This 207-nucleotide RNA was probed chemically with 2A3.
2A3 adducts were read by reverse transcription with SuperScript II with manganese.
The 2A3 profile rests on 962 reads.
Conditions: 150 mM KOAc, 10 mM MgCl2 and 150 mM bicine (pH 8.5), 24 C.
It was measured as part of the RMDB library M2RFPK.
Values cover nucleotides 27 to 156.
RNA sequence: GGGAACGACUCGAGUAGAGUCGAAAAAGCCUGGUCGAUACGUCGACCACGCAAUGCCGCCACAACGGCUUCCUGGCGUGGCGGAUCUCAUCCAAUGGAGCAACGCUCCGGAUACGUCCGGAGCGAAAAAAGCUCUGCUUCUUCGGAAGCAGAGCAAGCUAGUUUGACUGUUCGCAGUCAAACUAGCAAAAGAAACAACAACAACAAC
Reactivity to 2A3 in 0.01 (KOAc 150mM, MgCl2 10mM, bicine 150mM(pH8.5), 24C), signal-to-noise 1, nucleotides 027 to 156: a000g010c000c020u010g010g010u030c010g000a000u000a050c170g060u020c000g010a010c000c000a000c000g020c000a030a110u140g030c010c000g000c010c000a000c010a030a030c030g100g000c000u110u170c000c010u020g010g010c010g000u000g000g000c060g020g010a030u000c050u030c010a140u040c050c050a050a160u130g020g000a030g030c010a000a150c010g000c000u000c020c020g030g000a020u050a030c220g030u000c000c040g030g000a010g000c000g010a000a000a000a010a000a000g000c000u000c000u000g000c020u000u020c000u020u020c070g080g010a000a000g000c000a000g040a000g020c000a010a010